This 177-nucleotide RNA was probed chemically with 2A3. The 2A3 profile rests on 480 reads. 2A3 adducts were read by reverse transcription with SuperScript II with manganese. The data come from the RNA Mapping Database (RMDB), library OK1LIB. The reactions ran in a buffer of 150 mM KOAc, 10 mM MgCl2 and 150 mM bicine (pH 8.5), at 24 C.
[RMDB]
RNA sequence: GGGAACGACUCGAGUAGAGUCGAAAAAAGUUUGCUUUGCUAGCCAGACAUCAACACGACAUCGUAGACUGUGCAACGGUUCCACGAGGCGGUACGUGAGGUGGAAAAGUGGACGCCGCUGUCGGUGCCACGGGCUUAGCUUCGGCUAAGCCCGUGGAAAAGAAACAACAACAACAAC
Reactivity to 2A3 in 0.01 (KOAc 150mM, MgCl2 10mM, bicine 150mM(pH8.5), 24C), signal-to-noise 1, nucleotides 027 to 126: a000a000g070u070u070u150g050c000u090u000u030g000c070u070a010g010c010c020a000g040a100c070a000u110c120a110a160c100a000c000g110a000c010a090u010c100g000u000a080g050a060c040u050g030u070g020c020a040a210c000g120g070u080u030c000c000a040c010g000a040g050g030c130g030g010u090a090c000g060u000g000a060g040g110u080g000g000a020a000a160a000g030u050g000g000a000c010g040c000c090g010c040u100g110u110c060g030g000u050g020